RNA sequence: GGGAACGACUCGAGUAGAGUCGAAAACGAUGGCCCGCCAAGUCUCAAAGGCUAAACAACAAUUAUUACGUAUCGGUUUCGUCCCCAUCGCAGAAAUGAAAAUUUUUCCAUACGUACUUCCAAAUCAGUUUUACCUAUGAUUCGUCAUAGGUAAAACAAAAGAAACAACAACAACAAC
Reactivity to DMS in 0.01 (KOAc 150mM, MgCl2 10mM, bicine 150mM(pH8.5), 24C), signal-to-noise 5, nucleotides 027 to 126: c070g000a090u010g000g010c040c030c040g020c060c030a090a090g020u010c030u000c140a070a110a140g020g010c030u000a040a100a070c080a050a080c100a080a080u010u010a090u010u000a060c080g010u000a020u000c130g010g010u010u010u010c020g010u000c010c000c000c030a050u010c050g030c080a040g010a050a040a050u010g000a030a050a080a130u010u000u000u010u000c020c020a040u000a040c040g010u000a020c140u000u000c040c040a070a100a110u000c160a120
Reactivity to 2A3 in 0.01 (KOAc 150mM, MgCl2 10mM, bicine 150mM(pH8.5), 24C), signal-to-noise 4, nucleotides 027 to 126: c020g060a080u100g080g000c010c020c010g000c020c020a060a020g060u030c010u030c080a130a100a030g040g000c030u060a070a050a050c030a030a010c020a060a100u160u110a090u150u100a180c040g010u020a030u090c060g040g010u000u070u080c050g030u020c000c000c010c000a030u050c020g000c050a030g050a100a090a020u060g080a040a080a060a080u110u110u010u060u020c020c000a020u040a060c020g030u010a040c040u050u030c020c020a020a100a240u080c020a060
This 177-nucleotide RNA was probed chemically with DMS and 2A3. The reactions ran in a buffer of 150 mM KOAc, 10 mM MgCl2 and 150 mM bicine (pH 8.5), at 24 C.